Structure probing data (2A3 and DMS) for a 177-nucleotide construct. The 2A3 profile rests on 12,608 reads. Values cover nucleotides 27 to 126. The data come from the RNA Mapping Database (RMDB), library 15KREP. DMS adducts were read by reverse transcription with MarathonRT. Conditions: 150 mM KOAc, 10 mM MgCl2 and 150 mM bicine (pH 8.5), 24 C.
[RMDB]
RNA sequence: GGGAACGACUCGAGUAGAGUCGAAAAAAGAGGCAUUCUAUAGAGAUCUCUAUAGUUCGCCUACCACUUUGCAGGCUGUCGGUUCAUGCGUUGUAUGCCAUUCACAGACUUCCCUACGCUGUGGGACCAUAUUUAUGUAGUUCGCUACAUAAAUAUGAAAAGAAACAACAACAACAAC
Reactivity to 2A3 in 0.01 (KOAc 150mM, MgCl2 10mM, bicine 150mM(pH8.5), 24C), signal-to-noise 7, nucleotides 027 to 126: a010a000g150a010g000g000c010a010u030u000c010u010a010u000a020g070a120g080a300u140c070u000c000u220a000u000a010g000u010u020c040g000c000c000u020a050c010c010a040c020u070u090u120g030c040a010g040g000c010u030g030u080c020g050g020u040u050c030a020u060g020c040g090u070u150g070u110a060u100g040c020c010a040u060u060c030a030c000a040g030a040c010u050u050c010c000c000u010a020c050g010c020u020g000u030g020g010g020a010c000
Reactivity to DMS in 0.01 (KOAc 150mM, MgCl2 10mM, bicine 150mM(pH8.5), 24C), signal-to-noise 9, nucleotides 027 to 126: a080a090g000a040g010g010c000a040u000u000c000u000a000u000a000g010a040g000a160u010c170u000c000u000a000u000a010g010u000u000c060g010c000c000u000a120c040c030a090c080u000u000u010g010c060a070g000g000c070u000g000u000c060g010g010u000u000c050a050u000g010c080g010u000u000g010u010a070u000g010c050c040a080u000u000c070a030c040a050g000a070c090u000u000c040c010c000u000a090c110g010c030u000g010u000g000g010g010a100c160